[RMDB]
RNA sequence: GGGAACGACUCGAGUAGAGUCGAAAAUUAAGAGAAGGUAUUGAAGCUGGGAAUUAGGUUUCCGUGCAGAAGGUGGGCAUGACUCAUAAACCCAGGCUUGCACUGAAGUUGCCUAUCUUCCAUUAGGGCACUAAUAUGUGUUCGCACAUAUUAGUGCAAAAGAAACAACAACAACAAC
Reactivity to DMS in 0.01 (KOAc 150mM, MgCl2 10mM, bicine 150mM(pH8.5), 24C), signal-to-noise 3, nucleotides 027 to 126: u000u010a070a090g000a110g010a080a040g000g010u010a040u000u000g000a080a090g010c090u010g000g000g010a070a080u000u000a040g010g010u000u000u000c060c050g020u000g000c040a050g020a070a080g010g020u000g000g010g010c040a180u010g010a090c110u010c110a090u000a070a060a170c030c020c000a020g020g020c030u000u000g010c050a050c030u000g000a050a070g010u000u010g010c010c050u000a030u010c060u000u000c020c030a140u010u000a090g010g000
Reactivity to 2A3 in 0.01 (KOAc 150mM, MgCl2 10mM, bicine 150mM(pH8.5), 24C), signal-to-noise 3, nucleotides 027 to 126: u100u030a010a030g030a020g040a120a020g090g000u060a060u140u210g070a060a000g040c080u040g030g030g030a090a110u040u020a050g030g050u000u050u000c050c010g010u030g010c000a030g010a240a020g090g040u030g040g000g040c020a030u070g070a110c020u010c130a030u140a090a050a040c010c000c010a010g060g100c030u030u060g010c050a020c020u040g060a060a040g130u170u100g010c000c000u010a040u010c050u030u010c020c000a010u090u120a060g030g060